Chemical mapping of a 177-nucleotide RNA with DMS and 2A3. The RNA was probed in 150 mM KOAc, 10 mM MgCl2 and 150 mM bicine (pH 8.5) at 24 C. 2A3 adducts were read by reverse transcription with SuperScript II with manganese. For 2A3, 838 sequencing reads were counted.
RNA sequence: GGGAACGACUCGAGUAGAGUCGAAAAGUACUAGUACCCAUGUAGGUACCUAUACAUGCGUACACAGCAUACUAGGCUAGCUCAUGUCUAGACGGAUCCGUACAGUCGUACGUCAUGCACCAUGCUAUCAAACUUGCGUGUUCGCACGCAAGUUUGAAAAAGAAACAACAACAACAAC
Reactivity to DMS in 0.01 (KOAc 150mM, MgCl2 10mM, bicine 150mM(pH8.5), 24C), signal-to-noise 2, nucleotides 027 to 126: g050u000a000c180u000a100g000u000a010c020c050c070a090u000g000u000a040g020g000u000a060c140c090u010a100u040a000c090a000u000g030c290g010u030a040c030a110c210a030g050c150a080u000a080c060u000a120g000g000c070u000a070g000c090u020c200a090u000g000u030c010u000a070g000a070c120g000g010a090u000c090c070g000u000a060c090a190g000u000c100g010u000a050c020g000u010c080a060u000g000c090a080c080c080a080u000g020c080u000a010
Reactivity to 2A3 in 0.01 (KOAc 150mM, MgCl2 10mM, bicine 150mM(pH8.5), 24C), signal-to-noise 1, nucleotides 027 to 126: g050u030a070c040u030a050g020u020a000c030c090c000a010u050g100u180a030g130g070u110a110c000c000u090a070u010a070c020a010u010g010c010g030u020a010c060a000c000a000g000c060a080u130a110c000u060a070g000g010c010u030a050g000c020u070c080a050u100g040u000c050u060a050g000a010c030g050g120a170u070c100c040g000u020a050c030a040g220u100c040g030u100a020c000g070u050c030a050u100g010c020a040c000c040a060u130g030c050u090a080